[RMDB]
RNA sequence: GGGAACGACUCGAGUAGAGUCGAAAAAACAAACAUCAAAUCGCAUAGCAAAGAGUCAAAAAAAUAGAGAGCUUUGCGAGACCUACCAAGGGUGAAGAGAUACCAUCCAAGGCGCUGAAGAGAAAUCGAGAGCUCACGGCGUUCGCGCCGUGAGCAAGUUAUAGGGAUUCUUCGGAAUCCCUAUAACAAAAGAAACAACAACAACAAC
Reactivity to 2A3 in 0.01 (KOAc 150mM, MgCl2 10mM, bicine 150mM(pH8.5), 24C), signal-to-noise 1, nucleotides 027 to 156: a000a020c080a050a070a000c060a080u140c100a030a050a120u020c010g000c000a000u030a020g000c030a080a040a080g040a050g050u170c070a220a080a130a200a140a000a000u300a030g020a020g060a040g040c030u010u010u020g010c000g010a010g000a060c000c010u040a070c010c000a020a050g050g030g000u050g040a070a020g120a000g000a040u060a090c000c020a000u000c010c000a030a030g020g000c010g060c100u100g000a110a030g030a020g010a060a090a070u100c080g000a000g000a030g270c000u000c000a000c000g020g010c000g000u070u110c100g020c020g000c020c040g070u000g010a000g020c000a000a000
This 207-nucleotide RNA was probed chemically with 2A3. The RNA was probed in 150 mM KOAc, 10 mM MgCl2 and 150 mM bicine (pH 8.5) at 24 C.